[RMDB]
RNA sequence: GGGAACGACUCGAGUAGAGUCGAAAAUUUCAAGAGGUCCCCAGACACCGGCCACCCUCUUCCAGCCCCUGCGGCCAGUGCAAGGAGGCACCAAUGCUCUGAGGCUGUCGCGUGGUGCAGCGUCGAGUCAUUGUCGAAAAUUCGUUUUCGACAAUGAAAAAGAAACAACAACAACAAC
Reactivity to DMS in 0.01 (KOAc 150mM, MgCl2 10mM, bicine 150mM(pH8.5), 24C), signal-to-noise 7, nucleotides 027 to 126: u010u020u020c050a100a090g020a120g020g000u010c020c010c010c050a110g000a130c080a040c060c040g010g020c040c040a110c050c020c020u000c040u000u000c060c060a140g010c030c010c020c040u020g010c070g020g010c030c060a050g030u000g000c060a070a180g000g010a090g000g010c040a050c080c080a070a090u020g000c000u000c020u010g010a120g000g000c020u000g010u020c060g010c100g010u010g010g020u010g010c030a050g000c020g000u000c030g000a060g020
Reactivity to 2A3 in 0.01 (KOAc 150mM, MgCl2 10mM, bicine 150mM(pH8.5), 24C), signal-to-noise 7, nucleotides 027 to 126: u060u060u060c030a040a030g040a040g060g040u040c000c010c000c000a010g060a020c020a010c030c020g010g020c000c010a030c010c010c010u020c000u080u020c030c010a020g010c010c000c000c010u040g020c020g020g000c020c050a030g010u050g090c020a040a050g070g020a050g040g050c030a020c030c050a050a070u150g010c010u000c030u070g020a040g030g010c010u020g020u050c020g010c030g050u060g020g030u070g020c020a010g010c000g110u040c020g010a010g020
The record gives the reactivity of an RNA of 177 nucleotides to DMS and 2A3. 2A3 adducts were read by reverse transcription with SuperScript II with manganese.